[RMDB]
RNA sequence: GGGAACGACUCGAGUAGAGUCGAAAACAGCAAAAAGGAACCGAUUCCCACCAAGUUCGGAAAGAGAUACCGGGCGAGGCGCUGACGAAAGAAUCUCGCUUCAGACACCCCAAGGACUCGACUGAAGAAUGCACGCCAUCGUUCGCGAUGGCGUGAAGGAUUUACUUCGGUUCGCCGAAGUAAAUCCAAAAGAAACAACAACAACAAC
Reactivity to 2A3 in 0.01 (KOAc 150mM, MgCl2 10mM, bicine 150mM(pH8.5), 24C), signal-to-noise 1, nucleotides 027 to 156: c040a000g060c030a050a050a080a080a000g100g060a080a030c000c030g020a170u010u050c000c000c010a020c040c020a180a000g050u110u040c040g000g000a070a110a030g070a010g010a020u040a070c000c020g000g010g020c040g020a010g020g050c060g020c090u020g020a010c010g180a150a120a290g080a060a060u070c020u000c000g010c040u070u000c020a030g040a110c010a100c040c040c070c100a060a090g050g020a030c000u020c060g080a040c010u050g010a010a020g090a080a000u070g050c000a000c000g040c000c000a000u010c010g010u080u120c170g000c000g060a010u000g000g070c040g000u000g000a000a000